[RMDB]
RNA sequence: GGGAACGACUCGAGUAGAGUCGAAAAACAGCGUCGCGUCGAUGCGCGUGCCCAUCCCGGCGCUCGCGAGAAACGGCGCGAUGUACGUGUAGAGGAUGUUGUGCGCGAGCACGUACGCGAACAUCAAGACCUAGUCAUGGUUCGCCAUGACUAGGUCAAAAGAAACAACAACAACAAC
Reactivity to DMS in 0.01 (KOAc 150mM, MgCl2 10mM, bicine 150mM(pH8.5), 24C), signal-to-noise 3, nucleotides 027 to 126: a070c150a080g000c050g010u000c010g000c040g030u000c020g010a140u010g000c010g020c200g020u000g040c030c010c050a120u000c080c100c020g010g000c120g020c020u000c000g000c010g020a110g020a070a150a220c080g010g000c000g020c000g000a010u000g030u000a050c100g000u000g000u000a090g020a140g010g000a060u000g010u000u000g000u000g000c010g010c180g000a190g020c050a030c010g020u010a050c040g040c060g000a070a020c050a020u030c090a130a150
Reactivity to 2A3 in 0.01 (KOAc 150mM, MgCl2 10mM, bicine 150mM(pH8.5), 24C), signal-to-noise 2, nucleotides 027 to 126: a000c060a020g100c030g020u000c000g000c000g000u000c000g020a130u180g000c000g010c000g000u010g020c000c000c000a130u120c000c000c000g000g000c050g000c010u030c010g010c000g020a120g190a140a170a040c060g020g000c000g000c010g010a000u010g000u000a020c120g090u080g070u100a100g060a070g130g040a050u050g100u150u100g040u060g030c080g000c020g040a040g000c060a020c130g020u050a030c050g000c030g000a020a030c020a050u060c040a060a000